An RNA of 177 nucleotides, treated with DMS and 2A3 and read out base by base. Conditions: 150 mM KOAc, 10 mM MgCl2 and 150 mM bicine (pH 8.5), 24 C. 2A3 adducts were read by reverse transcription with SuperScript II with manganese.
[RMDB]
RNA sequence: GGGAACGACUCGAGUAGAGUCGAAAACCCAGCAGGGAGGCGAGUUACUCUUAUUGUUGAGGCCUCUCUAACAAUGAAAUUUGAUACCCUUCGCAGAGUUAUUUGCCGAAUCGUAAGAUGUCCAGAUUAUGUCAAGCUGUUUCGACAGCUUGACAUAAAAAGAAACAACAACAACAAC
Reactivity to DMS in 0.01 (KOAc 150mM, MgCl2 10mM, bicine 150mM(pH8.5), 24C), signal-to-noise 2, nucleotides 027 to 126: c000c000c040a130g000c140a030g030g050g020a040g030g030c080g020a150g010u040u070a250c040u000c160u030u050a130u030u050g040u020u000g000a050g010g000c000c070u100c000u000c010u030a000a120c280a000a160u040g000a020a010a190u030u000u000g000a090u030a070c000c030c110u010u030c050g000c090a030g010a110g000u030u020a090u050u000u010g000c000c030g030a060a010u050c050g010u020a160a050g010a070u000g000u010c000c030a150g000a180u000
Reactivity to 2A3 in 0.01 (KOAc 150mM, MgCl2 10mM, bicine 150mM(pH8.5), 24C), signal-to-noise 2, nucleotides 027 to 126: c000c000c000a010g050c110a000g000g000g030a000g010g000c110g150a070g060u100u060a040c000u060c000u020u140a200u300u270g070u000u080g010a040g020g000c000c010u000c000u000c000u000a030a000c090a080a130u230g080a100a020a030u130u030u020g030a040u100a020c050c000c000u040u030c060g000c030a000g000a050g130u010u080a030u140u060u190g080c030c000g060a010a070u070c020g040u040a040a000g000a090u020g050u040c010c010a010g000a160u000